[RMDB]
RNA sequence: GGGAACGACUCGAGUAGAGUCGAAAACCUCACUACAUUUUACUGUUCCUAAAGAAUUUGUGACAGGUACAGUAAAACGUAUUGCAAGGUUUAUCAGUUCCUAUAAACAGGUAAACAACAAUAUAUGAAAAGCAAAGACUGUUCGCAGUCUUUGCAACAUAUAAGGAGGGUUCGCCCUCCUUAUAUGAAAAGAAACAACAACAACAAC
Reactivity to 2A3 in 0.01 (KOAc 150mM, MgCl2 10mM, bicine 150mM(pH8.5), 24C), signal-to-noise 7, nucleotides 027 to 156: c000c010u020c000a020c020u020a010c000a050u000u010u000u000a000c000u000g020u050u090c000c000u060a070a150a070g170a260a290u250u280u260g130u120g070a080c100a050g000g000u020a000c000a000g000u000a000a000a000a000c010g000u000a000u000u020g040c110a100a050g020g020u030u020u020a120u080c020a010g010u030u030c010c000u050a090u200a080a080a010c050a010g060g110u100a070a090a020c020a040a030c030a180a040u070a020u040a040u190g130a090a100a010a020g000c000a000a000a000g010a000c010u010g020u040u060c180g000c100a000g000u000c000u000u000u000g000c000a000a000
Reactivity to DMS in 0.01 (KOAc 150mM, MgCl2 10mM, bicine 150mM(pH8.5), 24C), signal-to-noise 3, nucleotides 027 to 156: c010c000u000c010a060c060u000a060c010a020u000u000u000u000a020c010u000g000u060u000c000c000u000a120a190a210g030a140a160u000u000u000g040u000g030a200c240a050g000g000u000a010c000a020g020u000a020a010a020a020c040g020u000a010u000u010g040c060a110a040g010g050u010u000u000a080u010c110a130g010u000u000c030c020u000a160u000a090a110a110c080a080g020g020u000a030a070a110c020a100a100c040a050a080u000a160u010a130u010g000a140a070a120a120g040c000a000a010a010g000a000c000u000g010u000u010c260g030c030a030g030u000c000u000u000u000g020c000a020a050
Structure probing data (2A3 and DMS) for a 207-nucleotide construct. 2A3 adducts were read by reverse transcription with SuperScript II with manganese. For DMS the reverse transcriptase was MarathonRT. For DMS, 5,831 sequencing reads were counted. Conditions: 150 mM KOAc, 10 mM MgCl2 and 150 mM bicine (pH 8.5), 24 C.